[RMDB]
RNA sequence: GGGAACGACUCGAGUAGAGUCGAAAAGGCAACAACGGUGUAGCGGAACCACGUGCUGCGCUGCGCAUCCCGCAGCUGAGCAUGGGAAACGGUGUCAGCGGAGUGGAUGCCCAUGACGGCGAUGUAGAUGGAGUACUCAUUUCGAUGAGUACUCCAUAAAAGAAACAACAACAACAAC
Reactivity to 2A3 in 0.01 (KOAc 150mM, MgCl2 10mM, bicine 150mM(pH8.5), 24C), signal-to-noise 5, nucleotides 027 to 126: g080g010c030a060a040c010a050a030c110g100g000u060g060u110a050g050c020g000g060a020a040c020c000a110c120g020u060g000c020u040g040c010g000c020u050g000c010g000c000a090u190c010c030c010g020c030a020g000c030u100g080a010g020c030a040u090g030g020g010a070a100a040c070g050g020u040g050u090c030a020g000c010g030g040a080g030u130g010g030a080u090g030c000c020c020a070u110g020a040c040g010g020c040g050a030u110g080u170a100g010
Reactivity to DMS in 0.01 (KOAc 150mM, MgCl2 10mM, bicine 150mM(pH8.5), 24C), signal-to-noise 4, nucleotides 027 to 126: g010g020c040a040a080c080a090a150c080g000g020u000g000u010a060g000c020g000g030a110a100c030c040a090c020g010u010g000c010u020g000c110g010c010u000g000c060g000c140a220u050c140c110c010g010c040a050g010c000u000g030a030g000c010a030u030g020g000g030a090a070a150c110g010g000u010g010u010c030a050g010c050g000g000a080g030u020g000g000a080u020g010c000c010c020a060u030g010a050c050g000g000c050g020a070u010g000u010a070g010